[RMDB]
The record gives the reactivity of an RNA of 207 nucleotides to DMS and 2A3. Values cover nucleotides 27 to 156. The RNA was probed in 150 mM KOAc, 10 mM MgCl2 and 150 mM bicine (pH 8.5) at 24 C. For 2A3 the reverse transcriptase was SuperScript II with manganese.
RNA sequence: GGGAACGACUCGAGUAGAGUCGAAAAGAAAGAAAGAAAGCUGACCCUUCUGCUGACGGAUCUUGUGGAGCACCACAGCGCAGAAGGGGAGAGAAGCUUUAAUGCCGACCGUCUGGGCAGCCUUGAAAAAACGGAUUCUUCUUCGGAAGAAUCCGAACCGAUAUACAAGGUUCGCCUUGUAUAUCGGAAAAGAAACAACAACAACAAC
Reactivity to DMS in 0.01 (KOAc 150mM, MgCl2 10mM, bicine 150mM(pH8.5), 24C), signal-to-noise 2, nucleotides 027 to 156: g020a100a090a130g010a090a080a120g020a080a080a010g020c030u000g000a090c000c000c010u000u000c010u000g020c000u030g040a110c050g000g010a100u000c030u000u010g060u000g030g020a190g040c190a140c020c000a020c010a140g020c190g000c000a030g000a010a000g020g010g060g000a070g010a080g000a180a040g030c010u000u000u000a050a050u000g040c010c010g010a080c020c050g000u000c130u000g020g010g000c010a040g070c040c060u000u000g000a010a070a080a070a120a230c020g000g000a050u010u000c000u000u000c000u000u000c300g060g020a040a030g020a000a000u000c010c000g000a010a000
Reactivity to 2A3 in 0.01 (KOAc 150mM, MgCl2 10mM, bicine 150mM(pH8.5), 24C), signal-to-noise 2, nucleotides 027 to 156: g090a010a050a010g050a020a090a020g070a020a070a000g010c020u030g080a090c000c010c000u000u020c010u010g040c060u090g060a080c050g060g050a090u100c070u160u080g000u030g020g080a190g130c080a080c050c000a000c010a000g030c030g000c030a000g010a000a000g000g000g010g000a000g000a010g000a010a010g000c010u070u050u020a130a050u050g020c000c000g030a070c020c020g060u000c030u060g000g040g000c000a000g000c000c020u090u110g070a070a060a000a070a020a020c010g000g000a000u000u000c000u000u000c000u010u030c060g140g000a000a000g000a000a000u000c000c000g000a000a000